Structure probing data (2A3 and DMS) for a 177-nucleotide construct. The reactions ran in a buffer of 150 mM KOAc, 10 mM MgCl2 and 150 mM bicine (pH 8.5), at 24 C. The 2A3 profile rests on 389 reads.
[RMDB]
RNA sequence: GGGAACGACUCGAGUAGAGUCGAAAAAUUUGAGAGGCCUGCUUCAUAAAUGUUAUGAUUAACUAACUUUCAAACACUAUUUUAUCAGGCGUUUAUGAUCUCAGAAUCCAGUAUGGUUAUUUUGGGCCGAGGAGGCAUAGUUCGCUAUGCCUCCUCGAAAAGAAACAACAACAACAAC
Reactivity to 2A3 in 0.01 (KOAc 150mM, MgCl2 10mM, bicine 150mM(pH8.5), 24C), signal-to-noise 1, nucleotides 027 to 126: a000u090u070u040g050a010g020a020g030g050c020c110u100g030c050u000u030c030a030u020a000a030a010u000g010u050u000a260u220g010a080u090u000a030a000c040u050a060a080c010u180u300u250c220a060a250a060c050a010c100u110a120u040u040u010u030a000u030c000a000g150g000c050g030u020u020u000a030u080g110a060u010c000u030c000a000g060a020a090u010c020c010a020g030u150a160u240g010g000u110u000a080u090u190u090u200g000g040g020c020
Reactivity to DMS in 0.01 (KOAc 150mM, MgCl2 10mM, bicine 150mM(pH8.5), 24C), signal-to-noise 1, nucleotides 027 to 126: a080u020u040u000g010a020g000a100g000g050c000c000u000g050c290u010u070c010a000u000a000a020a090u000g020u000u000a090u010g000a000u020u020a090a030c240u030a130a110c170u040u050u000c220a150a080a070c300a170c020u000a030u000u000u000u030a040u000c000a060g000g000c000g010u000u000u000a000u050g000a020u000c000u000c020a050g000a050a030u010c000c010a020g070u030a100u020g000g000u000u000a080u000u010u040u000g030g000g000c150